[RMDB]
An RNA of 177 nucleotides, treated with DMS and 2A3 and read out base by base. The RNA was probed in 150 mM KOAc, 10 mM MgCl2 and 150 mM bicine (pH 8.5) at 24 C.

RNA sequence: GGGAACGACUCGAGUAGAGUCGAAAAGAUAUGGAUUUGGGACAUGCUGGGCUUUCGGAAACGAAAGCAUAGCAACAGCCCAACUGUCCUAAGUCAAAACCCACUCUCAGUUCGCUGAGAGUGGGAACCGUCCAUAGUAGUUCGCUACUAUGGACGGAAAAGAAACAACAACAACAAC
Reactivity to DMS in 0.01 (KOAc 150mM, MgCl2 10mM, bicine 150mM(pH8.5), 24C), signal-to-noise 2, nucleotides 027 to 126: g000a110u000a180u020g000g000a050u010u010u000g000g000g000a030c030a080u010g020c000u020g000g000g000c000u000u020u020c010g000g000a060a100a280c010g010a000a010a030g020c010a050u010a010g000c050a090a120c300a140g000c000c000c010a040a040c300u000g000u000c010c020u000a050a040g020u000c000a100a100a120a110c010c000c000a000c010u000c010u000c000a000g020u000u050c280g010c000u020g000a020g000a040g020u010g000g000g010a050a020
Reactivity to 2A3 in 0.01 (KOAc 150mM, MgCl2 10mM, bicine 150mM(pH8.5), 24C), signal-to-noise 2, nucleotides 027 to 126: g100a080u160a110u300g140g000a030u020u010u040g000g000g020a040c070a090u190g000c000u070g000g050g040c020u010u040u010c000g020g000a080a050a050c000g020a020a010a000g010c000a020u040a010g000c020a030a060c030a080g010c000c000c000a010a030c010u040g020u010c000c020u020a080a020g040u050c030a020a030a040a300c000c000c000a000c000u020c000u000c000a050g070u060u190c290g050c180u010g020a000g000a010g000u000g010g000g040a000a000
For DMS the reverse transcriptase was MarathonRT.